Structure probing data (2A3 and DMS) for a 177-nucleotide construct. For 2A3, 500 sequencing reads were counted. It was measured as part of the RMDB libraries RFM100 and RFMREP.
RNA sequence: GGGAACGACUCGAGUAGAGUCGAAAAGCGGGGUAUCAAUUAUCGAUGUGAGCAAUGAUCGAAAAGUUACGUAUGUUCUUCAUAGAGAUAAAUUAUUAUGCCUUACGCCUGGUUGACCAGACUUUAGCUGAAUACACAGCUUCGGCUGUGUAUUCAGAAAAGAAACAACAACAACAAC
Reactivity to 2A3 in 0.01 (KOAc 150mM, MgCl2 10mM, bicine 150mM(pH8.5), 24C), signal-to-noise 1, nucleotides 027 to 126: g000c000g000g000g000g040u000a010u040c160a000a040u060u000a040u020c000g000a000u000g060u040g000a040g010c090a020a140u090g130a090u080c030g080a080a000a090a190g120u140u070a160c060g050u180a180u300g060u000u110c050u140u060c000a010u030a010g010a000g010a030u010a060a050a020u060u040a030u050u050a000u070g000c010c010u030u110a020c030g010c030c000u060g120g000u070u220g100a110c020c030a000g090a050c000u070u000u030a020g020
Reactivity to DMS in 0.01 (KOAc 150mM, MgCl2 10mM, bicine 150mM(pH8.5), 24C), signal-to-noise 2, nucleotides 027 to 126: g000c020g010g040g000g020u010a010u020c270a040a090u000u000a020u000c010g010a150u030g000u010g000a020g010c170a020a050u000g010a040u000c040g000a120a080a040a120g020u000u020a130c070g030u010a040u020g000u000u010c020u000u000c010a020u020a040g010a240g010a020u000a050a050a150u000u020a070u010u000a030u000g000c000c000u010u000a120c030g000c020c020u000g000g000u000u010g000a130c040c070a140g000a130c030u010u010u000a090g000